[RMDB]
RNA sequence: GGGAACGACUCGAGUAGAGUCGAAAAAACGUUUCAUGAUCGUAAAACAUGCCCGGCUUACCGUGAGCCGCCUUUGAAAGAAAGGUUUACACGGACUCUGUUGCGUUACGCACGUACCUAACUUGUGAAAACGGCAUCUUGUUCGCAAGAUGCCGAAGGAAGAUUAGAAGUUCGCUUCUAAUCUUCCAAAAGAAACAACAACAACAAC
Reactivity to DMS in 0.01 (KOAc 150mM, MgCl2 10mM, bicine 150mM(pH8.5), 24C), signal-to-noise 2, nucleotides 027 to 156: a070a060c060g020u000u000u000c050a120u020g030a110u020c080g040u000a050a070a050a040c050a060u000g030c190c030c060g030g010c020u000u000a100c060c110g050u000g010a100g050c000c030g040c010c020u010u000u000g010a170a130a230g020a080a020a030g010g030u020u000u000a130c050a060c030g000g000a140c130u000c070u000g000u000u010g010c010g000u000u010a090c090g000c060a070c060g000u000a050c030c030u000a080a070c040u000u010g000u000g000a090a080a060a230c000g030g000c010a020u000c010u000u000g010u020u030c300g000c020a020a030g060a030u000g000c000c010g020a000a050
Reactivity to 2A3 in 0.01 (KOAc 150mM, MgCl2 10mM, bicine 150mM(pH8.5), 24C), signal-to-noise 4, nucleotides 027 to 156: a000a000c020g000u020u000u000c010a010u020g010a040u230c020g050u190a160a140a030a010c000a010u020g020c010c000c000g000g000c020u040u080a080c000c010g000u010g000a000g000c000c000g050c020c010u050u020u020g170a180a080a020g100a020a050a000g040g010u040u050u050a010c000a000c010g000g030a060c060u130c080u150g070u110u030g020c010g010u060u090a040c130g010c010a010c030g030u040a040c030c030u080a130a170c040u130u120g060u060g130a040a040a040a070c010g010g000c010a000u000c000u000u010g010u080u060c120g000c090a010a010g000a000u000g000c000c020g010a000a000